RNA sequence: GGGAACGACUCGAGUAGAGUCGAAAAUCACAAAAGAUACGCAUCAACUCGAUAUGUAUUUAGAGUGAUGGGACAAUUCCUUGGCUACCCACAGCUUAUAGAAAUGUCUCAUCUCAUAUUUGAGAACAUGCAUUAGUGCAUUCGUGCACUAAUGCAUAAAAGAAACAACAACAACAAC
Reactivity to 2A3 in 0.01 (KOAc 150mM, MgCl2 10mM, bicine 150mM(pH8.5), 24C), signal-to-noise 8, nucleotides 027 to 126: u080c020a020c070a090a110a030a030g090a040u120a070c060g030c070a070u060c040a080a160c080u040c070g020a010u010a010u040g090u020a110u080u250u180a170g030a030g090u150g010a010u010g000g000g000a000c020a060a120u030u020c020c000u030u050g010g000c010u050a130c020c050c030a080c070a050g000c010u170u130a080u060a210g030a000a020a020u020g010u000c000u000c000a040u000c020u000c020a020u060a100u100u120u260g060a040g010a040a050c060
Reactivity to DMS in 0.01 (KOAc 150mM, MgCl2 10mM, bicine 150mM(pH8.5), 24C), signal-to-noise 3, nucleotides 027 to 126: u000c030a010c030a060a210a210a020g020a010u000a010c020g010c060a030u030c010a090a170c130u000c130g020a010u000a000u000g000u000a030u000u020u000a060g000a300g020u000g000a030u000g000g010g000a020c060a020a070u000u010c010c050u000u010g000g000c000u000a060c100c060c110a090c220a110g000c010u000u010a030u020a070g000a030a040a050u000g030u000c010u030c010a150u000c000u000c010a040u020a070u040u010u040g020a020g010a070a110c240